[RMDB]
Structure probing data (2A3) for a 177-nucleotide construct. Reactivities are given for positions 27 through 126. The 2A3 profile rests on 427 reads. The RNA was probed in 150 mM KOAc, 10 mM MgCl2 and 150 mM bicine (pH 8.5) at 24 C.

RNA sequence: GGGAACGACUCGAGUAGAGUCGAAAAUGUGAUGACAAUUUGUAAGCUUGCUAGAAUAAGGGGGAGCUUCGCUUAUCCAUGCGGCAACUAUCUUCAGCCCAGAUGCCGCAUUGAAUUCGGGCCUCACUGGUCAUGUCGUCUUCGGACGACAUGACCAAAAAGAAACAACAACAACAAC
Reactivity to 2A3 in 0.01 (KOAc 150mM, MgCl2 10mM, bicine 150mM(pH8.5), 24C), signal-to-noise 1, nucleotides 027 to 126: u160g030u040g010a030u060g000a010c040a120a120u070u050u170g080u030a000a000g000c000u140u220g030c040u090a040g070a180a000u060a090a050g020g000g000g000g000a010g000c020u040u040c030g000c000u000u000a000u110c010c020a000u000g000c000g000g000c010a000a080c050u010a130u040c100u130u000c030a020g080c000c010c040a000g000a020u030g000c000c000g000c000a030u010u000g010a000a030u230u200c000g000g000g000c000c020u010c000a070c040